Conditions: 150 mM KOAc, 10 mM MgCl2 and 150 mM bicine (pH 8.5), 24 C. The record gives the reactivity of an RNA of 177 nucleotides to 2A3 and DMS. The DMS profile rests on 4,865 reads. It was measured as part of the RMDB library RFMREP.
RNA sequence: GGGAACGACUCGAGUAGAGUCGAAAAGUCGGGUGAGAAUCCCGACCGCCGGAAGGGCAAGGGUUCCACGGCAAUGUUCGUCAGCCGUGGGUGAGUCGGUCCUAAGGUGGCCCGUAACUCGGCGCCGGGUUAAUAAGUAGUUCGCUACUUAUUAACCAAAAGAAACAACAACAACAAC
Reactivity to 2A3 in 0.01 (KOAc 150mM, MgCl2 10mM, bicine 150mM(pH8.5), 24C), signal-to-noise 4, nucleotides 027 to 126: g000u000c010g000g010g010u010g010a050g030a020a030u020c000c000c000g000a000c010c000g000c010c000g030g080a110a100g020g010g010c040a040a060g090g010g020u180u090c010c000a010c000g010g000c080a090a080u100g020u160u180c170g110u130c090a180g260c060c000g000u010g000g000g010u040g000a000g050u030c020g000g020u000c000c000u040a100a060g090g060u090g080g020c010c000c000g000u060a060a040c040u030c080g000g000c020g010c050c050g050
Reactivity to DMS in 0.01 (KOAc 150mM, MgCl2 10mM, bicine 150mM(pH8.5), 24C), signal-to-noise 4, nucleotides 027 to 126: g020u000c000g010g000g010u000g000a150g010a300a100u010c000c000c000g000a020c010c020g010c020c000g000g020a110a100g010g010g010c020a120a090g010g020g020u010u010c000c010a020c000g010g010c000a080a100u020g020u010u010c110g000u010c080a160g000c010c010g020u000g000g010g010u000g000a030g010u000c010g010g010u000c000c010u010a120a130g020g020u000g000g000c000c000c010g010u010a100a060c150u000c040g010g020c030g010c050c060g010